[RMDB]
RNA sequence: GGGAACGACUCGAGUAGAGUCGAAAAGCAUGCGCGUGAGCCCGAAGCCGCGCUGGGGCUGGACGAGCGCCAGGUCGGCGACGACGCGCUCGGCGAGGAUGGCCUGCUGGAUCUGGGUGAGGGUGGUCUGGAAGUCGUCAAAGUCGACGAAGCGGUGCUGUCCUUAAGAUUUCGAUCUUAAGGACAGAAAAGAAACAACAACAACAAC
Reactivity to DMS in 0.01 (KOAc 150mM, MgCl2 10mM, bicine 150mM(pH8.5), 24C), signal-to-noise 2, nucleotides 027 to 156: g060c070a080u000g030c000g000c050g000u010g020a140g010c020c000c000g030a080a240g000c030c000g020c070g020c020u010g010g000g010g010c000u020g000g030a130c080g000a100g040c020g040c010c040a030g010g020u000c010g020g000c050g020a080c020g010a100c030g020c020g040c000u000c030g030g020c020g010a070g000g030a120u000g000g020c050c020u010g000c010u020g020g000a070u010c050u000g010g000g020u020g030a160g000g000g040u000g000g030u000c030u000g010g010a060a090g000u000c010g000u000c030a100a060a300g020u000c030g010a080c000g030a050a120g030c040g010g000u000g010
Reactivity to 2A3 in 0.01 (KOAc 150mM, MgCl2 10mM, bicine 150mM(pH8.5), 24C), signal-to-noise 5, nucleotides 027 to 156: g050c050a040u180g010c020g000c010g060u050g010a070g090c030c020c010g020a020a010g000c020c000g020c020g020c000u000g000g000g020g000c010u050g030g120a110c120g130a050g020c080g080c040c010a030g020g120u080c010g000g010c010g000a010c020g000a010c010g020c010g000c010u010c030g040g010c030g010a030g050g020a050u060g020g020c010c030u040g040c040u030g040g000a060u030c050u070g080g000g000u080g040a060g010g010g020u040g010g020u000c010u020g040g020a060a040g030u010c020g000u010c030a080a100a090g100u110c030g010a030c030g030a060a010g030c040g060g000u050g020
Chemical mapping of a 207-nucleotide RNA with DMS and 2A3. The RNA was probed in 150 mM KOAc, 10 mM MgCl2 and 150 mM bicine (pH 8.5) at 24 C. Source: RMDB library OK3TST, as collected in RNAgym. 2A3 is a SHAPE reagent: it acylates the 2'-hydroxyl of flexible nucleotides of all four kinds. For DMS the reverse transcriptase was MarathonRT. Reactivities are given for positions 27 through 156. DMS (dimethyl sulfate) methylates the pairing face of unpaired adenines and cytosines.